Source: RMDB library OK3TST, as collected in RNAgym.
Structure probing data (2A3 and DMS) for a 207-nucleotide construct.
2A3 adducts were read by reverse transcription with SuperScript II with manganese.
Values are in units of 0.01, from 0 to 300, in steps of 10.
For 2A3, 16,736 sequencing reads were counted.
The RNA was probed in 150 mM KOAc, 10 mM MgCl2 and 150 mM bicine (pH 8.5) at 24 C.

[RMDB]
RNA sequence: GGGAACGACUCGAGUAGAGUCGAAAAGCUAGUCGGAGACGACUAGCAACGAUCAGUUCGCUGAUCGGAACGUGCAUUCGAAUACGCUAGAAGCACGAAUAGGCGACGCAUAGCGAGCUCCAGAGGAAGCUCAUGACAUGAGUAACAAGGCGUCGCGACGAGUAAUAUGAUUCGUCAUAUUACUCGUAAAAGAAACAACAACAACAAC
Reactivity to 2A3 in 0.01 (KOAc 150mM, MgCl2 10mM, bicine 150mM(pH8.5), 24C), signal-to-noise 9, nucleotides 027 to 156: g000c000u000a000g000u000c000g000g010a030g010a090c000g010a000c000u000a000g000c000a000a010c000g000a000u000c000a000g040u080u100c130g000c090u000g000a010u000c000g010g050a080a030c010g000u010g000c060a300u010u040c020g040a100a050u160a180c110g020c130u070a050g000a020a000g010c000a000c010g010a060a090u170a100g060g000c000g000a000c000g000c020a050u060a060g080c040g030a000g000c000u020c040c040a090g040a060g170g030a080a010g000c000u020c010a030u090g030a030c040a120u130g040a040g110u110a140a050c070a110a050g070g000c000g000u000c000g000c000g000
Reactivity to DMS in 0.01 (KOAc 150mM, MgCl2 10mM, bicine 150mM(pH8.5), 24C), signal-to-noise 6, nucleotides 027 to 156: g010c000u000a010g010u010c000g030g020a300g010a290c010g010a040c000u000a020g010c010a030a020c000g010a010u000c010a010g020u000u010c300g020c020u010g020a010u000c000g020g000a060a100c030g010u010g000c010a280u010u000c030g000a190a180u000a100c140g020c080u010a140g010a060a120g020c000a030c010g000a100a090u000a130g000g000c000g000a030c000g020c010a150u010a140g020c050g000a020g030c020u000c020c020a170g030a160g010g020a140a100g010c000u010c000a060u010g000a130c090a300u000g000a130g050u000a080a110c070a070a120g020g010c000g020u000c000g000c000g000